[RMDB]
RNA sequence: GGGAACGACUCGAGUAGAGUCGAAAAAUGUUAGGAUGAAAGUGCAUCACUACGCGAUGAUCGCCGAUGGUGCCAUCCUCAUUCAUCGUGAGCGUCUGCUCUUCAUAGGCAUCCAUCAGGGUGAUGAUAGAGCGAGACAAUUCGUUGUCUCGCUCUAAAAAGAAACAACAACAACAAC
Reactivity to DMS in 0.01 (KOAc 150mM, MgCl2 10mM, bicine 150mM(pH8.5), 24C), signal-to-noise 3, nucleotides 027 to 126: a080u000g000u000u010a050g010g010a020u010g020a110a060a150g010u030g010c000a010u000c010a030c040u000a140c280g020c000g030a160u010g000a100u000c040g040c010c020g000a040u000g010g020u010g010c010c020a060u000c010c000u000c070a060u000u000c050a040u000c070g000u020g010a040g000c080g030u000c100u020g010c030u000c020u000u010c070a080u000a120g010g010c010a040u000c020c010a090u000c140a170g000g010g010u000g000a020u010g000a200
Reactivity to 2A3 in 0.01 (KOAc 150mM, MgCl2 10mM, bicine 150mM(pH8.5), 24C), signal-to-noise 1, nucleotides 027 to 126: a000u110g030u130u050a030g020g000a020u050g040a010a130a050g140u100g050c010a000u020c020a000c050u190a070c070g000c000g080a110u190g040a100u210c010g000c050c010g010a030u030g000g000u010g000c000c000a050u000c000c000u000c000a030u060u060c020a010u060c090g100u020g040a020g000c040g080u120c230u210g030c040u020c020u070u070c110a080u090a070g080g090c000a000u000c040c000a030u060c070a070g000g000g070u050g000a090u000g010a030
Chemical mapping of a 177-nucleotide RNA with DMS and 2A3. For DMS, 2,478 sequencing reads were counted. DMS (dimethyl sulfate) methylates the pairing face of unpaired adenines and cytosines. Values cover nucleotides 27 to 126. For DMS the reverse transcriptase was MarathonRT.